[RMDB]
RNA sequence: GGGAACGACUCGAGUAGAGUCGAAAAUUUAUUUAAUUCAAUACAUGGAGUAUUAAUGCGCUGUAUGAAUGCCGAAGGUAGUAUUGGACGCCACAAUCUUUAGGAACCAUGCUUCUGAGUUUUAAAAUGGUGACUAGUUUAGCAUAGAUUCAACAUAUCCUGGAUAAUUAUUCGUAAUUAUCCAGGAAAAAGAAACAACAACAACAAC
Reactivity to DMS in 0.01 (KOAc 150mM, MgCl2 10mM, bicine 150mM(pH8.5), 24C), signal-to-noise 2, nucleotides 027 to 156: u000u000u000a110u020u010u020a090a110u010u000c010a030a100u000a040c020a140u000g000g040a130g010u000a080u010u010a050a090u010g040c040g010c050u030g030u000a060u010g000a050a060u000g000c060c010g000a170a070g000g030u020a070g010u010a080u000u000g010g020a080c030g020c010c040a060c100a060a070u000c090u000u000u000a170g000g020a100a070c010c040a070u000g010c050u000u000c090u000g000a090g010u020u010u000u000a040a070a080a070u000g000g030u000g000a080c040u010a040g030u000u000u010a070g000c050a080u020a100g000a130u000u000c030a030a040c040a060u000a130
Reactivity to 2A3 in 0.01 (KOAc 150mM, MgCl2 10mM, bicine 150mM(pH8.5), 24C), signal-to-noise 1, nucleotides 027 to 156: u010u000u040a120u070u020u170a040a000u140u000c000a000a060u000a030c010a050u070g030g000a050g030u010a030u140u110a090a130u040g000c080g000c070u020g000u130a060u110g030a140a090u070g000c030c020g040a010a000g090g010u100a060g010u000a070u000u200g000g010a000c010g010c040c020a070c000a060a040u050c000u070u140u070a030g010g010a000a000c070c000a040u000g000c000u010u000c000u010g100a090g070u000u000u000u290a070a200a100a050u020g000g000u000g010a050c000u000a000g020u030u000u060a000g000c000a010u120a010g030a190u280u300c000a010a010c000a070u250a050
This 207-nucleotide RNA was probed chemically with DMS and 2A3. 2A3 is a SHAPE reagent: it acylates the 2'-hydroxyl of flexible nucleotides of all four kinds. 2A3 adducts were read by reverse transcription with SuperScript II with manganese. The reactions ran in a buffer of 150 mM KOAc, 10 mM MgCl2 and 150 mM bicine (pH 8.5), at 24 C. DMS adducts were read by reverse transcription with MarathonRT. The 2A3 profile rests on 534 reads. Source: RMDB library OK3TST, as collected in RNAgym. Reactivities are given for positions 27 through 156.